[RMDB]
RNA sequence: GGGAACGACUCGAGUAGAGUCGAAAAGAUAUGGAUGGGUAGGGAGAGACUUCGGAAACGAAAUCUCUCAUCGAUCUAUACCAUCCUAAGUCGACGUAGAGUAGUAUGUUCGCAUACUACUCUACAACCUUCUCUUGGUCUUCGGACCAAGAGAAGGAAAAGAAACAACAACAACAAC
Reactivity to 2A3 in 0.01 (KOAc 150mM, MgCl2 10mM, bicine 150mM(pH8.5), 24C), signal-to-noise 1, nucleotides 027 to 126: g000a020u080a000u150g000g000a010u000g000g000g000u000a010g050g140g010a000g000a030g010a010c000u000u020c030g020g040a060a060a050c010g010a020a010a010u000c000u050c000u020c000a010u080c060g020a010u050c020u000a010u050a300c000c000a000u000c000c010u050a120a040g040u070c050g040a130c100g010u000a000g000a000g000u020a000g000u000a000u020g020u010u090c220g000c160a000u000a010c020u000a000c010u030c000u010a000c030a000a010
Reactivity to DMS in 0.01 (KOAc 150mM, MgCl2 10mM, bicine 150mM(pH8.5), 24C), signal-to-noise 1, nucleotides 027 to 126: g020a030u000a300u000g000g000a020u020g000g000g000u000a030g000g030g000a010g000a000g000a010c020u000u000c000g000g010a120a060a300c000g000a010a010a020u000c010u010c000u010c000a100u010c210g010a060u020c030u000a010u000a180c000c000a030u000c000c020u010a020a080g000u000c040g000a100c130g000u000a010g020a030g010u000a000g000u010a000u010g020u000u000c170g030c000a010u000a000c020u000a000c040u010c000u000a000c000a060a200